[RMDB]
The record gives the reactivity of an RNA of 177 nucleotides to DMS and 2A3. The data come from the RNA Mapping Database (RMDB), library OK2TRN. Reactivities are given for positions 27 through 126. 2A3 adducts were read by reverse transcription with SuperScript II with manganese. The RNA was probed in 150 mM KOAc, 10 mM MgCl2 and 150 mM bicine (pH 8.5) at 24 C.
RNA sequence: GGGAACGACUCGAGUAGAGUCGAAAACAGCGCAUGGAGCUCAACAGCGAAGUGGUGCACGUGCAGCCCAUCGCUGUGGUGGACAUGCUGGGCCUGCCCUCCACAGAGACAGACACAACCUUUGUGCCUGAUCACUUGCCUUCGGGCAAGUGAUCAGAAAAGAAACAACAACAACAAC
Reactivity to DMS in 0.01 (KOAc 150mM, MgCl2 10mM, bicine 150mM(pH8.5), 24C), signal-to-noise 2, nucleotides 027 to 126: c140a090g000c170g000c040a020u000g000g000a300g000c000u000c040a110a040c000a000g010c030g010a080a010g000u010g010g010u000g020c020a150c300g000u010g020c120a130g010c010c020c010a180u010c010g020c010u000g010u000g010g020u000g010g000a150c020a020u000g000c030u000g000g000g030c070c010u000g000c040c020c010u000c020c030a020c050a080g010a070g000a040c070a040g030a020c070a080c040a060a130c170c130u010u000u000g010u000g020c060
Reactivity to 2A3 in 0.01 (KOAc 150mM, MgCl2 10mM, bicine 150mM(pH8.5), 24C), signal-to-noise 1, nucleotides 027 to 126: c000a010g000c030g010c020a000u000g030g000a040g060c000u030c100a100a010c000a000g040c000g000a080a000g110u120g080g090u080g010c050a060c300g190u300g000c060a100g120c060c000c000a050u000c010g000c000u020g020u000g000g020u060g040g160a000c000a000u000g000c020u030g020g040g060c020c020u050g000c000c000c000u090c000c000a070c000a020g050a000g010a020c000a040g000a000c000a010c020a130a030c000c040u100u150u090g070u020g070c030